Structure probing data (2A3 and DMS) for a 177-nucleotide construct. The 2A3 profile rests on 2,225 reads.

RNA sequence: GGGAACGACUCGAGUAGAGUCGAAAAUUCUAUGAUUGGAAAGUCAGUGUGAGUUUCACUUCAGAGAUACACACAGCAGAAAAGUACUACAAUAGUAUAUACAUGUAUCUAGAGAAAGUCAAUGGUGUAGUAUGUCCAUUUUCGAAUGGACAUACUAAAAAGAAACAACAACAACAAC
Reactivity to 2A3 in 0.01 (KOAc 150mM, MgCl2 10mM, bicine 150mM(pH8.5), 24C), signal-to-noise 3, nucleotides 027 to 126: u060u020c030u040a120u110g050a090u080u140g060g100a120a110a040g030u040c080a060g020u040g020u010g140a110g040u040u100u020c060a050c020u060u070c060a060g040a000g000a150u040a010c010a010c000a000c010a060g090c020a030g190a090a150a030a040g040u000a010c020u010a030c040a120a120u090a090g010u010a020u020a020u020a090c030a070u080g010u000a010u020c000u040a010g020a030g010a210a070a010g010u030c020a030a080u090g120g020u140g040
Reactivity to DMS in 0.01 (KOAc 150mM, MgCl2 10mM, bicine 150mM(pH8.5), 24C), signal-to-noise 5, nucleotides 027 to 126: u010u000c020u000a080u000g010a080u010u010g010g030a100a120a080g030u010c030a080g020u000g020u010g010a250g010u000u000u000c040a120c130u000u000c120a120g000a050g000a030u010a070c030a030c110a100c120a100g000c140a090g020a080a070a080a140g010u000a020c040u000a120c220a060a080u000a020g020u000a010u010a090u010a110c080a060u000g000u000a020u000c020u000a100g010a130g010a070a040a060g010u000c090a040a050u000g000g020u010g010
The reactions ran in a buffer of 150 mM KOAc, 10 mM MgCl2 and 150 mM bicine (pH 8.5), at 24 C. Reactivities are given for positions 27 through 126.